Chemical mapping of a 177-nucleotide RNA with DMS and 2A3. For 2A3 the reverse transcriptase was SuperScript II with manganese. It was measured as part of the RMDB library OK1LIB. The DMS profile rests on 143,050 reads. DMS adducts were read by reverse transcription with MarathonRT. The reactions ran in a buffer of 150 mM KOAc, 10 mM MgCl2 and 150 mM bicine (pH 8.5), at 24 C.

RNA sequence: GGGAACGACUCGAGUAGAGUCGAAAACGAGGCCUCUAUAUUGCAAGUAGAUCUGGUUCUAAACGGCCUCAAUCUAUGCGGUACGGAGCUUCGAUUGAGGAUGUGCAUGAAUACUGGACAUUGGCGGAUAUGUAAUUGCGUUCGCGCGAUUGCAUAUAAAAGAAACAACAACAACAAC
Reactivity to DMS in 0.01 (KOAc 150mM, MgCl2 10mM, bicine 150mM(pH8.5), 24C), signal-to-noise 9, nucleotides 027 to 126: c070g000a090g000g010c020c010u000c030u010a080u010a060u020u020g010c090a070a100g010u010a040g000a100u010c070u010g000g000u000u000c030u010a050a110a080c110g000g000c000c000u000c060a020a000u000c010u010a050u010g010c010g000g010u020a080c140g010g000a140g000c000u000u010c140g000a040u000u000g000a030g000g000a040u010g010u000g000c080a090u010g000a060a070u020a050c050u000g000g000a040c060a090u020u010g000g010c040g000g000
Reactivity to 2A3 in 0.01 (KOAc 150mM, MgCl2 10mM, bicine 150mM(pH8.5), 24C), signal-to-noise 9, nucleotides 027 to 126: c030g010a020g030g010c020c010u020c030u020a050u010a030u070u160g060c030a060a040g070u020a010g030a070u000c010u020g010g000u040u010c020u040a040a020a020c020g030g000c000c000u000c000a000a000u000c000u010a010u050g010c000g030g030u060a060c050g060g060a030g000c000u020u010c010g020a020u000u030g010a010g010g010a010u020g010u010g030c040a030u060g020a050a010u080a090c020u010g010g010a010c000a050u020u040g030g010c010g000g020